[RMDB]
RNA sequence: GGGAACGACUCGAGUAGAGUCGAAAAUCCGACGAGCUGAACGCUUUCGAAGGAAAGCUUCACCAGCUAAUCUUCUGCAACGCCAUUACGAGGACUGCCCUUAGAGGCUCAUGGCGAUAGGUCACCCAAAACUAUUUGAGGUUCGCCUCAAAUAGAACUGCAAAUUUAUGUUCGCAUAAAUUUGCAGAAAAGAAACAACAACAACAAC
Reactivity to DMS in 0.01 (KOAc 150mM, MgCl2 10mM, bicine 150mM(pH8.5), 24C), signal-to-noise 2, nucleotides 027 to 156: u000c050c000g020a080c040g020a080g050c010u000g000a070a080c110g010c010u010u000u010c000g010a300a140g010g000a050a030a030g020c010u000u000c020a120c070c010a060g000c000u000a060a090u000c010u000u020c030u000g040c030a110a170c040g030c040c000a040u000u010a150c080g000a150g030g000a100c060u000g000c000c020c020u000u020a130g020a140g000g060c000u000c040a050u000g010g000c010g030a070u000a040g000g000u000c020a120c010c000c030a060a010a140a130c000u000a010u000u000u010g000a020g000g000u000u010c300g000c030c000u000c000a020a010a020u000a000g000a050a140
Reactivity to 2A3 in 0.01 (KOAc 150mM, MgCl2 10mM, bicine 150mM(pH8.5), 24C), signal-to-noise 6, nucleotides 027 to 156: u050c030c010g030a050c040g050a010g020c040u020g030a070a020c090g000c000u030u020u020c030g080a160a090g170g020a020a030a000g010c000u080u080c040a060c030c020a010g020c020u060a110a090u050c100u180u030c030u110g070c050a090a070c040g000c010c020a030u060u140a090c100g050a090g100g060a090c080u100g020c000c010c000u070u170a120g040a140g130g000c020u010c020a010u010g000g000c000g020a050u100a030g050g010u050c030a070c010c020c000a020a040a050a070c010u000a000u010u000u000g000a000g010g030u050u090c160g040c050c000u000c000a000a000a000u000a000g000a030a020
Structure probing data (DMS and 2A3) for a 207-nucleotide construct. Reactivities are rounded to 0.1 and cut off at 0 and 3. It was measured as part of the RMDB library M2RFPK. The 2A3 profile rests on 4,277 reads. The reactions ran in a buffer of 150 mM KOAc, 10 mM MgCl2 and 150 mM bicine (pH 8.5), at 24 C.